[RMDB]
RNA sequence: GGGAACGACUCGAGUAGAGUCGAAAAAGUGUCGGGUUAAGUCCCUUAACGAGCGCAACCCCUAUCGUUAGUUGCCCACGGUUCGGCCGGGUACUCUAGCGAGACUGCCGGCGUUAAGCCGGAGGAACUUUUAUGCAUCGUUCGCGAUGCAUAAAAGAAAAGAAACAACAACAACAAC
Reactivity to DMS in 0.01 (KOAc 150mM, MgCl2 10mM, bicine 150mM(pH8.5), 24C), signal-to-noise 2, nucleotides 027 to 126: a030g000u010g030u000c060g000g020g000u000u000a020a110g000u000c030c030c000u000u000a080a060c050g030a170g020c100g000c130a120a160c070c000c000c070u000a100u000c010g010u000u000a020g020u000u010g000c040c000c100a300c040g000g010u000u010c200g010g030c000c020g010g000g000u000a010c160u000c010u000a010g020c000g000a000g010a090c070u020g010c010c000g000g000c010g000u000u000a090a140g010c020c000g010g010a010g000g000a080a150
Reactivity to 2A3 in 0.01 (KOAc 150mM, MgCl2 10mM, bicine 150mM(pH8.5), 24C), signal-to-noise 1, nucleotides 027 to 126: a010g080u040g070u070c010g040g000g010u080u040a090a060g300u170c030c000c030u030u020a080a010c040g020a030g040c000g000c040a070a070c020c000c010c020u030a010u090c000g000u000u020a000g010u020u000g000c050c020c110a060c020g020g070u060u090c140g000g000c040c000g000g000g020u000a020c040u010c000u030a000g000c000g000a000g020a010c060u140g070c030c000g020g000c010g020u110u210a070a020g000c000c030g010g000a000g020g030a020a030
Structure probing data (DMS and 2A3) for a 177-nucleotide construct. For DMS the reverse transcriptase was MarathonRT. The reactions ran in a buffer of 150 mM KOAc, 10 mM MgCl2 and 150 mM bicine (pH 8.5), at 24 C. It was measured as part of the RMDB library RFMREP.